[RMDB]
The data come from the RNA Mapping Database (RMDB), library OK2TRN. Chemical mapping of a 177-nucleotide RNA with 2A3 and DMS. Reactivities are given for positions 27 through 126. The reactions ran in a buffer of 150 mM KOAc, 10 mM MgCl2 and 150 mM bicine (pH 8.5), at 24 C.

RNA sequence: GGGAACGACUCGAGUAGAGUCGAAAAUAAUCGCGGCAUGCGCGCAUGCUACGCGGCGCAUGCAUCGUACGCGCGUAUAAUAUUAGCUACGCGUAGCCGGCCGAUGCUAGCAUGCUAGCCGUACGCGGUUAGCGUCAUGUUUCGACAUGACGCUAACAAAAGAAACAACAACAACAAC
Reactivity to 2A3 in 0.01 (KOAc 150mM, MgCl2 10mM, bicine 150mM(pH8.5), 24C), signal-to-noise 6, nucleotides 027 to 126: u130a020a070u130c020g000c010g020g010c090a020u080g020c050g000c020g000c100a010u040g020c010u020a010c030g010c000g030g000c020g000c040a040u150g030c010a020u050c030g030u050a040c130g000c000g000c010g070u020a040u050a120a130u150a190u220u210a040g040c030u010a010c010g000c000g000u000a030g010c020c020g060g000c010c020g050a050u100g020c090u020a020g000c010a010u060g000c020u050a020g000c010c010g020u020a030c020g000c000g030
Reactivity to DMS in 0.01 (KOAc 150mM, MgCl2 10mM, bicine 150mM(pH8.5), 24C), signal-to-noise 7, nucleotides 027 to 126: u010a080a070u010c040g010c020g010g000c130a060u000g010c050g020c090g000c010a030u000g000c020u010a030c050g010c000g000g010c020g030c080a080u000g020c030a040u010c140g010u010a060c120g010c010g010c020g020u000a030u000a090a110u010a140u010u010a140g020c110u000a040c020g010c000g020u000a050g010c090c140g000g010c030c040g000a090u000g020c130u000a030g010c050a030u000g010c010u000a120g030c010c100g000u000a050c050g010c020g020